[RMDB]
RNA sequence: GGGAACGACUCGAGUAGAGUCGAAAAGAUUAUGUGGGAGAGGCGCCCUUUCGUUUCAUCGGAUAAUUAAUUGCCAGUCGCUGGCUUUAGCGAUCUUGAUGUCAUCUGUAGCGAUGACUAUGCUACCUUAAGGUAUGAUCCGGAUACCUCCGGUAAAGAUAAUGCGCAGUUUCGACUGCGCAUUAUCAAAAGAAACAACAACAACAAC
Reactivity to 2A3 in 0.01 (KOAc 150mM, MgCl2 10mM, bicine 150mM(pH8.5), 24C), signal-to-noise 2, nucleotides 027 to 156: g030a030u130u080a020u220g020u110g010g020g000a080g000a010g020g000c010g000c010c020c000u050u050u060c090g020u120u100u030c160a080u040c030g020g000a070u100a120a020u210u100a010a090u130u180g000c010c020a020g110u190c080g000c090u020g040g010c020u150u120u110a010g000c000g010a000u010c040u030u110g040a030u110g010u000c000a020u010c000u050g140u250a000g090c020g040a000u050g000a020c000u060a120u060g020c050u050a060c060c020u060u120a100a000g000g000u020a010u100g040a050u040c010c000g010g000a020u060a120c040c050u000c010c050g000g030u010a040a110a000